[RMDB]
Chemical mapping of a 177-nucleotide RNA with DMS and 2A3. Reactivities are given for positions 27 through 126. The reactions ran in a buffer of 150 mM KOAc, 10 mM MgCl2 and 150 mM bicine (pH 8.5), at 24 C. The DMS profile rests on 2,898 reads. DMS adducts were read by reverse transcription with MarathonRT. The data come from the RNA Mapping Database (RMDB), library OK2TRN.
RNA sequence: GGGAACGACUCGAGUAGAGUCGAAAAUGCCAUUGAAUAUCCUUUUCUGUAUCUCACAACCGCAUAGGAAUACCAACCUUGCUUUAGCAGAUUGAUUGGUAAUUAUUCAAGUAGAGGGCCAGCAUCGGAUAAACUGCUGAUUCGUCAGCAGUUUAUCAAAAGAAACAACAACAACAAC
Reactivity to DMS in 0.01 (KOAc 150mM, MgCl2 10mM, bicine 150mM(pH8.5), 24C), signal-to-noise 3, nucleotides 027 to 126: u010g000c020c060a190u000u010g000a100a060u000a060u000c040c010u010u000u010u000c040u010g010u000a080u020c040u000c060a060c060a090a140c100c110g000c090a060u000a060g020g000a080a140u010a080c100c070a020a040c030c040u000u000g010c010u000u010u000a110g020c060a050g010a130u000u000g010a050u000u000g000g010u010a050a110u000u010a050u010u010c030a050a070g010u000a100g000a080g010g020g010c040c050a040g000c080a050u010c110g030
Reactivity to 2A3 in 0.01 (KOAc 150mM, MgCl2 10mM, bicine 150mM(pH8.5), 24C), signal-to-noise 2, nucleotides 027 to 126: u100g040c010c000a060u000u070g050a050a030u040a030u120c000c010u050u070u030u020c030u050g070u080a080u050c060u000c030a080c020a070a140c030c030g000c000a040u120a110g060g080a060a050u060a060c010c030a040a020c020c010u020u040g030c000u090u200u140a050g000c040a040g030a150u090u070g090a130u020u020g030g000u030a060a050u110u070a060u090u030c020a040a000g000u040a050g090a060g060g000g030c030c000a000g000c000a050u060c050g040